This 207-nucleotide RNA was probed chemically with DMS and 2A3.
RNA sequence: GGGAACGACUCGAGUAGAGUCGAAAAGGGGUCUGCUUCGUCUUGGAUUUAUCAAGCUUUUGACGAGCUGAAGCCUCCACGGCUCGAUAAGCUUGAUUGUCAGACGAAAGCAGACGGAGGCACCCAAAAGGCCUAUGAAGUUCGCUUCAUAGGCCAAGAUAUAAUUAUGCUUCGGCAUAAUUAUAUCAAAAGAAACAACAACAACAAC
Reactivity to DMS in 0.01 (KOAc 150mM, MgCl2 10mM, bicine 150mM(pH8.5), 24C), signal-to-noise 1, nucleotides 027 to 156: g000g010g010g000u000c000u010g000c030u000u000c020g010u010c000u000u010g050g010a110u000u000u000a040u010c030a040a000g020c000u000u000u000u000g010a180c150g010a020g020c010u000g010a060a140g000c040c010u010c020c000a300c030g010g010c010u030c010g010a160u000a050a020g040c000u000u010g000a030u000u010g020u000c030a080g010a030c010g010a020a060a080g040c000a010g000a020c000g010g010a050g020g040c020a100c010c010c010a060a050a130a170g000g020c000c000u000a010u000g000a010a020g010u000u000c300g000c020u000u000c010a020u000a020g020g020c000c000a000a030
Reactivity to 2A3 in 0.01 (KOAc 150mM, MgCl2 10mM, bicine 150mM(pH8.5), 24C), signal-to-noise 3, nucleotides 027 to 156: g070g010g010g010u010c020u010g000c010u010u010c000g020u010c040u090u220g170g030a130u270u290u140a050u110c010a000a000g010c030u030u050u170u290g170a110c040g000a000g000c000u020g040a050a010g020c010c010u000c000c010a030c010g000g010c000u000c020g070a090u020a150a030g000c000u010u010g000a020u020u150g070u080c030a010g000a000c020g000a020a020a000g000c000a000g010a000c010g000g000a000g000g020c020a050c010c000c000a010a080a040a010g000g010c000c000u000a000u000g010a010a010g030u110u170c200g090c180u000u000c000a000u000a000g000g030c000c000a000a000

Source information
For 2A3 the reverse transcriptase was SuperScript II with manganese.